[RMDB]
RNA sequence: GGGAACGACUCGAGUAGAGUCGAAAAGGAACGGCUGCCGACGAGAUGGACGCGACGAGAGGACUUCGGAGGGCACGUACACUGGAGGCCCGCUCAGACGGCAAUGUUUUGUCAAGACAAAGACAGGCAUCCCUAUCCCUUUCGAGGGAUAGGGAUGAAAAGAAACAACAACAACAAC
Reactivity to DMS in 0.01 (KOAc 150mM, MgCl2 10mM, bicine 150mM(pH8.5), 24C), signal-to-noise 4, nucleotides 027 to 126: g000g000a080a070c040g000g010c020u000g040c000c020g010a060c060g000a110g010a090u000g010g000a070c110g010c070g020a100c100g000a060g000a120g010g000a110c040u000u000c110g000g000a130g010g020g010c020a060c110g000u040a080c060a050c020u000g000g000a060g020g010c030c010c050g020c040u010c080a040g000a100c100g000g000c110a050a090u050g000u020u000u000u000g010u000c060a090a050g010a090c180a060a090a080g010a090c070a030g000g020
Reactivity to 2A3 in 0.01 (KOAc 150mM, MgCl2 10mM, bicine 150mM(pH8.5), 24C), signal-to-noise 6, nucleotides 027 to 126: g060g010a060a020c040g030g020c050u070g000c020c020g040a070c040g020a020g030a130u120g040g030a030c040g000c020g080a040c050g010a010g000a040g070g040a050c010u040u010c060g050g030a060g040g020g000c030a020c080g030u110a030c070a040c060u030g030g040a040g000g030c020c020c000g000c010u030c010a030g020a090c010g020g000c020a050a060u080g030u000u060u060u050g030u020c010a070a020g030a070c030a040a130a000g010a010c010a020g010g060